Source information:
Source: RMDB libraries RFM100 and RFMREP, as collected in RNAgym. An RNA of 177 nucleotides, treated with 2A3 and DMS and read out base by base. The RNA was probed in 150 mM KOAc, 10 mM MgCl2 and 150 mM bicine (pH 8.5) at 24 C. For DMS the reverse transcriptase was MarathonRT.

RNA sequence: GGGAACGACUCGAGUAGAGUCGAAAACCGAAACUCGGUCGUAGUUCGGAUUGCGGAUUGAAACUCAUCCGCAUGAAGCUGGAUUCGGUAGUAAUCGCGCCUCAGAAGGGCGCGGUGAAUACGUCCCCAUUGUGGCAAGCUUCGGCUUGCCACAAUGAAAAGAAACAACAACAACAAC
Reactivity to 2A3 in 0.01 (KOAc 150mM, MgCl2 10mM, bicine 150mM(pH8.5), 24C), signal-to-noise 4, nucleotides 027 to 126: c020c010g010a100a070a010c030u030c010g030g000u030c020g030u050a020g020u040u060c030g040g020a040u010u040g010c010g000g020a030u070u130g170a220a080a060c120u050c110a010u000c000c000g000c000a010u030g020a010a030g050c050u040g010g000a040u050u040c000g020g000u080a010g000u000a010a010u010c000g000c000g000c000c000u110c060a210g060a250a140g050g010g000c000g000c000g000g010u010g000a010a020u080a060c010g010u010c000c000c000
Reactivity to DMS in 0.01 (KOAc 150mM, MgCl2 10mM, bicine 150mM(pH8.5), 24C), signal-to-noise 3, nucleotides 027 to 126: c070c010g010a070a140a030c020u000c030g000g000u000c030g000u010a010g000u040u010c000g010g000a090u000u000g000c010g010g000a010u000u040g000a150a160a120c300u010c070a030u000c000c000g020c000a020u000g000a210a150g000c050u020g030g010a020u010u000c000g010g010u000a060g020u010a090a030u000c000g000c000g000c000c020u000c030a250g000a230a300g000g000g000c000g020c000g010g000u000g000a150a110u000a080c040g000u000c000c010c000